[RMDB]
RNA sequence: GGGAACGACUCGAGUAGAGUCGAAAAGGUGGUCCGAAGAACGCAAUCGGUAAAAUCCCUAAAGUUAAAUUUGCGGAUGGUACAGGUCUAUUCAGCUCAUACCGAAACCCAAUUACUAGACCGACACUUGCUACACUAAACGAUGGUAAUGAUAGCCGGAUAACAAGCCUUUCGAGGCUUGUUAUCCAAAAGAAACAACAACAACAAC
Reactivity to 2A3 in 0.01 (KOAc 150mM, MgCl2 10mM, bicine 150mM(pH8.5), 24C), signal-to-noise 2, nucleotides 027 to 156: g020g010u070g030g060u000c010c010g010a040a000g040a100a060c090g000c130a020a030u010c000g060g000u050a020a050a030a070u030c020c000c000u030a080a060a020g010u010u130a040a040a210u040u050u070g010c000g020g010a030u080g050g000u040a050c000a040g040g000u000c030u060a050u110u080c050a010g000c000u020c060a020u020a050c000c040g000a050a040a050c000c000c000a020a000u230u060a070c060u030a010g080a030c000c010g020a000c010a000c060u050u170g000c000u020a020c020a020c020u140a110a110a040c050g120a150u140g020g010u050a150a050u090g040a030u000a020g110c050c090
Reactivity to DMS in 0.01 (KOAc 150mM, MgCl2 10mM, bicine 150mM(pH8.5), 24C), signal-to-noise 1, nucleotides 027 to 156: g040g050u030g040g010u020c000c040g010a150a030g020a060a080c020g000c070a030a170u040c010g050g020u000a090a090a080a060u010c000c040c000u000a030a090a110g010u000u010a000a110a270u000u000u000g030c070g050g000a100u000g000g000u000a080c010a050g000g040u000c040u000a100u000u010c070a060g020c040u070c070a050u000a080c030c080g000a080a040a140c020c030c010a110a080u020u000a090c110u000a110g010a050c020c030g040a060c050a080c110u000u010g000c010u000a070c100a070c040u010a010a070a120c110g000a130u000g000g030u000a080a090u000g000a090u010a080g000c140c090
Structure probing data (2A3 and DMS) for a 207-nucleotide construct. For 2A3, 883 sequencing reads were counted. The reactions ran in a buffer of 150 mM KOAc, 10 mM MgCl2 and 150 mM bicine (pH 8.5), at 24 C. It was measured as part of the RMDB library OK3TST. Reactivities are rounded to 0.1 and cut off at 0 and 3. For DMS, 1,546 sequencing reads were counted.